Overview: An RNA of 207 nucleotides, treated with DMS and 2A3 and read out base by base. The reactions ran in a buffer of 150 mM KOAc, 10 mM MgCl2 and 150 mM bicine (pH 8.5), at 24 C. For DMS the reverse transcriptase was MarathonRT. 2A3 adducts were read by reverse transcription with SuperScript II with manganese. Values are in units of 0.01, from 0 to 300, in steps of 10.
[RMDB]
RNA sequence: GGGAACGACUCGAGUAGAGUCGAAAAAGUCCGAUGCGUAUGACUCCGGGAUCGUAAUCGAUGGGUAUUUCCAAGAUAUCCGACCCAACUACGGAACGGCCGACGAGACAUUAGACCAGUUGGAAGAAUGGUUAUUAGAUGAAUUCGAGACGACGGACGGGUGUACGUGCUUCGGCACGUACACCCGAAAAGAAACAACAACAACAAC
Reactivity to DMS in 0.01 (KOAc 150mM, MgCl2 10mM, bicine 150mM(pH8.5), 24C), signal-to-noise 1, nucleotides 027 to 156: a090g020u000c010c010g030a110u000g000c000g020u000a060u020g010a100c050u040c070c010g010g000g000a080u000c080g050u020a160a130u000c000g000a100u000g000g040g000u000a090u000u020u000c170c150a100a180g030a040u000a000u000c050c010g060a080c080c030c080a040a130c020u000a070c050g000g040a070a110c030g000g090c040c000g020a130c090g000a200g000a100c050a010u000u020a020g030a020c000c010a120g000u000u000g000g040a170a120g010a110a060u000g040g040u010u030a100u000u000a130g010a140u020g010a120a190u010u000c040g000a160g000a040c040g050a120c070g060g010a260
Reactivity to 2A3 in 0.01 (KOAc 150mM, MgCl2 10mM, bicine 150mM(pH8.5), 24C), signal-to-noise 6, nucleotides 027 to 156: a000g070u030c020c000g030a070u100g050c030g020u060a030u170g050a080c020u000c070c050g040g010g050a140u050c020g040u050a070a080u020c040g050a130u190g000g000g020u080a110u030u090u080c070c040a050a010g010a030u020a040u010c010c010g030a050c000c000c020a030a010c030u100a030c030g030g070a090a030c020g010g030c010c000g020a030c030g010a010g030a060c030a060u070u080a030g030a060c000c020a020g020u040u020g070g020a040a020g010a050a040u050g010g030u060u060a060u040u070a080g030a080u040g040a040a130u030u040c010g010a010g010a060c050g010a020c020g010g010a010